[RMDB]
Description: The record gives the reactivity of an RNA of 207 nucleotides to 2A3 and DMS. Reactivities are rounded to 0.1 and cut off at 0 and 3. Source: RMDB library OK3TST, as collected in RNAgym. For 2A3, 781 sequencing reads were counted. The reactions ran in a buffer of 150 mM KOAc, 10 mM MgCl2 and 150 mM bicine (pH 8.5), at 24 C.

RNA sequence: GGGAACGACUCGAGUAGAGUCGAAAAAUGACAUCAGCAGGCAUCAGCCAAGUGAGAGUAACAGGUAUGAGGUUAGAUUUGUGCCAAACCCAAGACAUUUAUAAUCCGCAAGUGGCCUACAUGAAGUAUGUCUGUCUACACCUCUAGUAGCGCCUCCAUCGUCCAGAGAAUUCGUUCUCUGGACGAUAAAAGAAACAACAACAACAAC
Reactivity to 2A3 in 0.01 (KOAc 150mM, MgCl2 10mM, bicine 150mM(pH8.5), 24C), signal-to-noise 2, nucleotides 027 to 156: a020u060g030a010c020a050u040c030a060g010c010a000g030g070c000a040u040c080a070g060c040c000a150a060g070u060g040a070g000a010g000u080a040a070c050a080g070g000u030a030u150g010a010g070g000u030u070a010g040a080u050u050u200g040u050g050c010c030a000a090a090c020c000c030a010a010g050a000c020a010u030u150u160a110u050a050a080u120c070c080g000c100a090a160g020u060g090g000c000c010u030a020c020a040u090g050a070a000g030u040a060u030g030u000c070u040g040u010c000u020a000c000a010c070c000u030c030u000a070g070u000a000g010c040g000c030c000u000c030c010
Reactivity to DMS in 0.01 (KOAc 150mM, MgCl2 10mM, bicine 150mM(pH8.5), 24C), signal-to-noise 1, nucleotides 027 to 156: a120u010g010a120c090a070u000c010a140g090c050a100g050g000c040a090u010c070a100g000c040c040a040a060g000u000g000a070g030a150g010u010a040a080c020a080g030g030u010a030u040g010a120g000g010u000u010a030g010a140u000u010u000g040u000g010c000c050a040a070a120c030c000c010a110a110g010a010c000a030u000u010u000a060u010a080a110u000c000c050g010c030a060a060g060u000g000g000c020c010u000a040c030a070u010g020a030a110g000u000a090u000g010u010c020u000g030u010c040u000a070c040a030c030c030u020c000u000a200g030u000a050g010c140g000c070c000u000c020c060